[RMDB]
RNA sequence: GGGAACGACUCGAGUAGAGUCGAAAAUAGCCCAUCACUUCGGCCUCCAGCGGAGGGGCGACUGCGGUAACAACGUCGUCUUGAGCGUCCGUGCGGAGGGUCAAGCAGGCUGUGCUAUUGAGCUCCGGUGGAUGGAUAUUUUCGAAUAUCCAUCCACAAAAGAAACAACAACAACAAC
Reactivity to 2A3 in 0.01 (KOAc 150mM, MgCl2 10mM, bicine 150mM(pH8.5), 24C), signal-to-noise 9, nucleotides 027 to 126: u020a010g010c010c030c000a020u040c020a010c030u040u030c060g040g000c000c000u010c010c000a010g000c010g000g000a030g010g010g000g000c000g000a000c000u030g020c020g040g080u180a160a090c040a020a010c030g010u000c000g030u000c000u020u070g070a110g090c090g140u000c010c000g020u030g040c180g030g000a030g010g000g020u010c010a010a020g040c060a050g120g010c060u010g010u010g010c000u010a020u020u070g040a040g030c040u010c040c020g040
Reactivity to DMS in 0.01 (KOAc 150mM, MgCl2 10mM, bicine 150mM(pH8.5), 24C), signal-to-noise 5, nucleotides 027 to 126: u010a020g030c010c030c010a050u010c050a240c000u000u000c090g020g020c000c000u000c010c000a300g010c010g000g010a100g000g000g000g010c000g000a000c000u010g010c300g010g000u080a120a070c010a060a300c110g000u000c010g050u000c000u000u010g030a230g030c080g020u000c020c000g030u000g020c120g000g000a050g020g010g010u020c050a050a030g020c190a100g000g010c110u010g010u010g000c000u010a030u000u000g020a140g000c030u000c000c070g020
Description: This 177-nucleotide RNA was probed chemically with 2A3 and DMS.